[RMDB]
Chemical mapping of a 177-nucleotide RNA with DMS and 2A3.
RNA sequence: GGGAACGACUCGAGUAGAGUCGAAAAGACUGCGUGCACUAGAGACGAUAUCGAGCCGGAAAUUAAUCGAUAAUGUCUCAUGUAGUGGAUACGAUCCGGCAAGUAUCGACUACCUGUGCUCGUAGGAGACGCUAUAGUCAUUCGUGACUAUAGCGUCAAAAGAAACAACAACAACAAC
Reactivity to DMS in 0.01 (KOAc 150mM, MgCl2 10mM, bicine 150mM(pH8.5), 24C), signal-to-noise 2, nucleotides 027 to 126: g020a130c000u000g010c000g000u000g000c000a000c000u020a120g000a010g000a000c010g010a150u000a020u000c000g010a060g010c000c000g070g020a120a160a070u060u040a060a120u010c010g010a000u010a000a060u010g010u000c000u020c010a050u030g020u000a010g000u000g000g010a010u000a030c000g000a110u020c000c000g000g020c020a100a170g010u000a000u000c020g000a010c000u000a010c000c210u010g010u000g000c000u000c000g100u000a000g000g000a100
Reactivity to 2A3 in 0.01 (KOAc 150mM, MgCl2 10mM, bicine 150mM(pH8.5), 24C), signal-to-noise 9, nucleotides 027 to 126: g070a010c000u000g000c000g000u010g000c010a010c010u020a010g000a000g000a010c020g030a030u010a000u070c000g000a000g000c000c000g020g110a090a110a080u290u220a090a140u130c000g010a010u010a060a070u160g010u000c000u000c010a060u150g000u010a020g010u010g150g000a000u000a010c010g020a040u010c000c000g000g000c040a030a010g000u000a000u010c030g080a010c010u020a050c000c050u020g000u000g000c000u000c000g000u000a000g010g010a040
The reactions ran in a buffer of 150 mM KOAc, 10 mM MgCl2 and 150 mM bicine (pH 8.5), at 24 C. DMS adducts were read by reverse transcription with MarathonRT. Values cover nucleotides 27 to 126.